[RMDB]
RNA sequence: GGGAACGACUCGAGUAGAGUCGAAAAAACACACUUGGUUCCAUGAUAAAGAGAAUCCUUACACAUCUUUCUCCUAUCAUGGUUCUUUUGUCACUGACGCUGUGUCUGGUGGUGGACAAACAGUCAAACGACUCACCUAUUUCGAUAGGUGAGUCGUAAAAGAAACAACAACAACAAC
Reactivity to DMS in 0.01 (KOAc 150mM, MgCl2 10mM, bicine 150mM(pH8.5), 24C), signal-to-noise 1, nucleotides 027 to 126: a050a070c090a010c100a120c100u010u010g000g010u010u000c000c030a010u000g000a020u010a010a110a190g030a020g050a010a000u000c040c090u000u000a070c270a160c230a000u020c030u000u000u000c000u010c000c100u000a000u000c000a000u000g000g000u000u000c020u040u000u000u000g000u000c140a140c080u000g000a050c070g000c100u010g020u000g010u000c020u000g020g010u000g000g000u000g030g000a030c080a040a030a110c050a100g010u000c030a030a190